[RMDB]
Chemical mapping of a 177-nucleotide RNA with DMS. DMS adducts were read by reverse transcription with MarathonRT. The data come from the RNA Mapping Database (RMDB), library TTRINS. Conditions: 150 mM KOAc, 10 mM MgCl2 and 150 mM bicine (pH 8.5), 24 C. The DMS profile rests on 3,194 reads.
RNA sequence: GGGAACGACUCGAGUAGAGUCGAAAAGAUAUGGAAAAGGCUAAGCCUGUAGUCCAGCGAUAAGAAACUAUUCGGAAACGAAUACUUUCUUUUGACGCUGCUACAGGCUUAGCCUUUUCCUAAGUCAUCUUAUAUCCGUGUUCGCACGGAUAUAAGAAAAAGAAACAACAACAACAAC
Reactivity to DMS in 0.01 (KOAc 150mM, MgCl2 10mM, bicine 150mM(pH8.5), 24C), signal-to-noise 3, nucleotides 027 to 126: g000a040u000a300u000g000g010a000a010a010a000g010g000c000u000a010a010g010c010c010u000g000u010a010g000u010c300c070a010g050c010g020a200u010a010a010g000a010a000a010c110u010a010u000u000c010g020g010a160a150a240c000g010a030a000u000a010c150u000u000u000c000u000u000u000u000g000a190c070g000c000u000g020c010u000a000c000a000g010g000c010u000u000a000g000c000c000u000u000u000u000c000c000u010a010a070g000u000c050a160